An RNA of 207 nucleotides, treated with 2A3 and read out base by base. The data come from the RNA Mapping Database (RMDB), library M2RFPK.

RNA sequence: GGGAACGACUCGAGUAGAGUCGAAAAGCAACUUAGGAUUUUAGGCUCCCCGUGCGUGUCUCGAACCAUGCCGGGCCAAACCCACGGGGGCUGGCGGUCCCCGUGCGGUCAAAAUCAAAACGCUGGAAAAACAGUUCUAGCUUCGGCUAGAACUGAACAACAUAAACCACUUCGGUGGUUUAUGUUGAAAAGAAACAACAACAACAAC
Reactivity to 2A3 in 0.01 (KOAc 150mM, MgCl2 10mM, bicine 150mM(pH8.5), 24C), signal-to-noise 2, nucleotides 027 to 156: g010c010a000a120c090u130u120a130g200g000a140u190u080u070u140a130g000g000c040u110c050c040c010c000g070u140g060c000g000u000g030u040c050u100c300g090a070a060c040c000a010u040g000c000c000g000g010g000c010c010a100a070a020c000c000c000a000c000g000g010g010g030g020c000u010g010g030c010g000g010u000c000c010c000c000g010u010g030c080g000g000u080c050a000a030a000a130u060c030a000a020a020a120c030g000c030u060g100g000a090a230a000a000a000c010a010g010u000u000c000u000a010g000c000u050u030c200g010g000c000u000a000g000a000a000c000u000g000a000a000